[RMDB]
RNA sequence: GGGAACGACUCGAGUAGAGUCGAAAAGAUAUGGACUCUUACGCCGAAGGUUAACUUCGAUAAGUAUCUUUCGGAAACGAAAGAAUACUUUUGACGAAGUGACCUUCGGCGUAAGAGUCCUAAGUCAGUAAGAAUUAUGGUUCGCCAUAAUUCUUACAAAAGAAACAACAACAACAAC
Reactivity to DMS in 0.01 (KOAc 150mM, MgCl2 10mM, bicine 150mM(pH8.5), 24C), signal-to-noise 4, nucleotides 027 to 126: g010a060u010a300u010g000g000a020c000u000c000u000u000a000c000g020c000c010g020a020a010g000g010u000u000a070a040c010u000u000c000g020a170u000a010a030g010u000a020u000c000u000u000u000c000g010g000a160a100a200c010g010a010a000a020g010a060a050u000a000c000u000u000u010u010g010a260c150g000a020a020g010u000g010a010c000c000u000u000c010g010g000c010g000u000a000a000g000a000g010u000c000c000u000a010a060g010u000c050a200